[RMDB]
RNA sequence: GGGAACGACUCGAGUAGAGUCGAAAAGUGUUAUCCGGACGGUAAUGAUAAACCGUUCUGCUCAGGUUCAGGCUCCGGCAGGCCUGACGGAUACUGAGUCCGAAUGCCGUUAUCAGAUGAGUGACCAGCACAAUAAGGUGUUCGCACCUUAUUGUGCAAAAGAAACAACAACAACAAC
Reactivity to DMS in 0.01 (KOAc 150mM, MgCl2 10mM, bicine 150mM(pH8.5), 24C), signal-to-noise 1, nucleotides 027 to 126: g040u010g020u030u000a030u020c060c040g020g010a070c020g020g000u000a090a070u000g010a190u000a110a130a050c070c020g000u030u000c010u000g040c080u000c010a020g020g010u010u000c000a000g020g000c010u010c110c040g000g000c080a080g020g000c010c020u000g010a020c080g000g000a170u000a190c040u000g000a070g060u010c030c080g010a060a070u000g020c060c040g000u010u010a060u010c100a060g040a120u000g000a090g020u000g010a130c060c010a120
Reactivity to 2A3 in 0.01 (KOAc 150mM, MgCl2 10mM, bicine 150mM(pH8.5), 24C), signal-to-noise 1, nucleotides 027 to 126: g060u010g040u190u010a000u060c060c010g000g010a000c020g050g010u040a160a080u100g230a140u110a080a090a030c020c000g000u010u080c010u010g010c010u020c020a020g070g030u120u000c000a010g000g010c000u000c060c080g000g050c010a010g000g030c010c000u000g000a010c000g000g030a080u100a220c040u040g010a020g040u060c000c050g110a090a050u050g040c010c010g020u010u100a140u080c030a060g050a250u110g040a060g140u050g070a060c000c030a010